[RMDB]
RNA sequence: GGGAACGACUCGAGUAGAGUCGAAAAUAGUUGGAGCCGAGGCUUUACCUAGCAGGAGAGCUAGCAUUACUUCAAUUGAUUUUCCAUCCUUACCCCCACCAAGGCGGUCAAGAAGUAGAAGUAGGUCUCGCACUAGAGCGUUGACACCAAUAGAUUGACAUAUGGAACAAUUCGUUGUUCCAUAUGUAAAAGAAACAACAACAACAAC
Reactivity to 2A3 in 0.01 (KOAc 150mM, MgCl2 10mM, bicine 150mM(pH8.5), 24C), signal-to-noise 3, nucleotides 027 to 156: u160a010g030u020u030g050g010a040g020c070c070g040a050g010g020c000u070u070u130a140c010c010u030a050g020c040a030g040g140a090g030a010g040c000u020a020g000c030a070u100u140a050c000u010u030c030a080a220u050u060g030a090u020u120u080u040c020c060a120u060c060c010u040u210a140c000c000c020c000c010a020c030c010a050a000g020g010c020g000g050u000c030a000a040g020a060a030g080u050a030g020a130a010g000u050a020g000g000u000c000u020c010g000c000a010c060u050a040g000a010g080c020g030u020u040g020a030c030a020c050c000a010a050u060a040g070a070u050u060g010
Reactivity to DMS in 0.01 (KOAc 150mM, MgCl2 10mM, bicine 150mM(pH8.5), 24C), signal-to-noise 5, nucleotides 027 to 156: u000a080g010u000u000g010g020a090g050c040c040g030a080g010g020c020u000u000u000a100c070c020u000a110g050c070a190g020g020a130g000a110g020c020u000a040g060c060a110u010u000a030c010u000u000c010a050a150u000u010g000a080u000u000u000u010c050c060a140u000c030c030u000u010a280c030c010c010c020c020a120c110c090a070a080g010g010c160g000g010u000c050a030a080g020a060a060g030u000a070g010a090a120g010u010a050g020g010u000c010u000c020g000c030a070c040u000a130g000a110g020c030g010u000u000g000a160c040a070c010c010a040a080u000a060g020a210u000u000g010